[RMDB]
RNA sequence: GGGAACGACUCGAGUAGAGUCGAAAAGAUUCAGAUCGUAUUAUUCGUGGUCACCGCUUUAUGGGUGAACCUGAGUUUACGCUCGAUAAUGCCGAUCAAUACCCGCAAGUCUUGCAGGAACGCGGUACAUGUACUUCGCAUUCGUGCGAAGUACAUGAAAAGAAACAACAACAACAAC
Reactivity to 2A3 in 0.01 (KOAc 150mM, MgCl2 10mM, bicine 150mM(pH8.5), 24C), signal-to-noise 4, nucleotides 027 to 126: g080a000u160u120c100a050g010a010u000c000g000u010a010u030u010a020u020u100c190g090u190g050g000u010c010a000c010c000g130c240u250u240u160a180u300g100g000g000u020g040a060a070c000c000u000g000a000g000u010u110u070a090c110g000c000u000c010g010a000u010a040a030u050g050c070c060g000a000u010c020a010a040u050a080c020c000c000g000c030a040a050g110u030c040u130u150g050c060a040g060g060a070a000c080g010c020g010g000u080a030
Reactivity to DMS in 0.01 (KOAc 150mM, MgCl2 10mM, bicine 150mM(pH8.5), 24C), signal-to-noise 4, nucleotides 027 to 126: g010a130u010u010c160a120g010a030u000c020g020u000a000u010u000a010u000u000c170g010u020g020g010u000c000a020c000c010g020c160u010u030u010a080u030g020g000g010u000g000a040a050c010c000u000g000a010g010u000u010u010a080c210g020c050u010c010g000a060u000a040a030u010g000c080c040g010a040u000c040a080a150u010a090c050c000c000g020c130a100a100g010u000c090u000u000g010c080a080g010g010a040a060c170g010c020g010g000u000a120

Source: RMDB library OK2TST, as collected in RNAgym. This 177-nucleotide RNA was probed chemically with 2A3 and DMS. The DMS profile rests on 3,803 reads. For DMS the reverse transcriptase was MarathonRT.